Structure probing data (DMS and 2A3) for a 177-nucleotide construct. For 2A3 the reverse transcriptase was SuperScript II with manganese. The reactions ran in a buffer of 150 mM KOAc, 10 mM MgCl2 and 150 mM bicine (pH 8.5), at 24 C. It was measured as part of the RMDB library OK2TRN. For 2A3, 39,437 sequencing reads were counted.
[RMDB]
RNA sequence: GGGAACGACUCGAGUAGAGUCGAAAAGUCAGUGAGACACUCUGAGUCACUCAGUCUGAGAGUCAGAGUGUGACAGUCUCAGACACACUGACAGAGACACACAGACUGUGUCAGUCUGUGAGACACAGUAUAUAAGUGACUUCGGUCACUUAUAUACAAAAGAAACAACAACAACAAC
Reactivity to DMS in 0.01 (KOAc 150mM, MgCl2 10mM, bicine 150mM(pH8.5), 24C), signal-to-noise 9, nucleotides 027 to 126: g010u000c010a010g010u000g010a130g010a040c010a020c010u000c010u010g000a090g010u010c170a120c020u000c020a130g010u010c100u010g010a060g000a080g010u000c010a020g000a030g010u000g010u010g010a120c220a130g010u000c030u000c050a050g010a050c040a300c020a010c010u000g010a010c010a120g010a130g000a140c190a120c010a010c020a020g000a020c010u000g010u010g010u010c050a030g010u000c000u000g000u000g000a060g010a140c100a080c160a120
Reactivity to 2A3 in 0.01 (KOAc 150mM, MgCl2 10mM, bicine 150mM(pH8.5), 24C), signal-to-noise 9, nucleotides 027 to 126: g010u010c010a000g010u010g050a070g030a040c010a010c030u020c010u020g070a060g170u140c020a060c060u030c020a040g210u040c080u150g030a020g000a010g070u020c010a000g020a020g030u020g010u010g010a040c020a020g050u000c030u010c080a010g020a020c020a000c000a000c060u000g000a000c010a010g090a010g010a030c010a000c000a000c010a090g020a030c010u060g030u150g180u300c030a000g020u000c000u010g010u010g050a000g010a000c060a000c010a060